The record gives the reactivity of an RNA of 177 nucleotides to 2A3 and DMS. For DMS the reverse transcriptase was MarathonRT. Conditions: 150 mM KOAc, 10 mM MgCl2 and 150 mM bicine (pH 8.5), 24 C. Values are in units of 0.01, from 0 to 300, in steps of 10. Source: RMDB library OK2TRN, as collected in RNAgym. For 2A3, 814 sequencing reads were counted.
RNA sequence: GGGAACGACUCGAGUAGAGUCGAAAAGAAUACUCAGACAAAGCCCAGACUUUGGAGAGCGCCACAUUGCGUUAUUCCUAAAAUCCCAAUGGGUGAAGAAAAAUGAGAAAAUCGGCGCAGUCAACGACAGCUACUCCAUAUUCGUAUGGAGUAGCUGAAAAGAAACAACAACAACAAC
Reactivity to 2A3 in 0.01 (KOAc 150mM, MgCl2 10mM, bicine 150mM(pH8.5), 24C), signal-to-noise 1, nucleotides 027 to 126: g010a040a050u130a140c050u070c010a040g040a120c080a060a050a070g010c010c020c000a070g060a060c070u090u070u060g000g010a010g000a010g010c010g010c010c020a200c060a190u060u110g000c010g020u040u020a070u220u120c000c000u050a000a090a070a150u080c020c020c000a000a070u070g000g050g050u090g020a090a060g060a000a050a080a010a030u110g010a000g000a150a110a000a110u010c050g010g010c030g030c050a050g040u010c070a040a020c000g090a010
Reactivity to DMS in 0.01 (KOAc 150mM, MgCl2 10mM, bicine 150mM(pH8.5), 24C), signal-to-noise 2, nucleotides 027 to 126: g000a060a170u010a090c010u020c030a010g060a230c100a070a060a260g000c010c020c150a080g000a170c070u000u000u000g010g000a080g020a040g030c000g050c010c150a110c230a130u000u000g000c030g000u000u000a060u030u010c030c050u000a030a020a110a110u000c020c020c010a100a110u010g000g010g020u010g020a060a150g000a020a040a060a110a140u000g000a030g000a060a060a100a090u020c030g000g020c030g010c050a020g010u000c060a050a120c110g000a140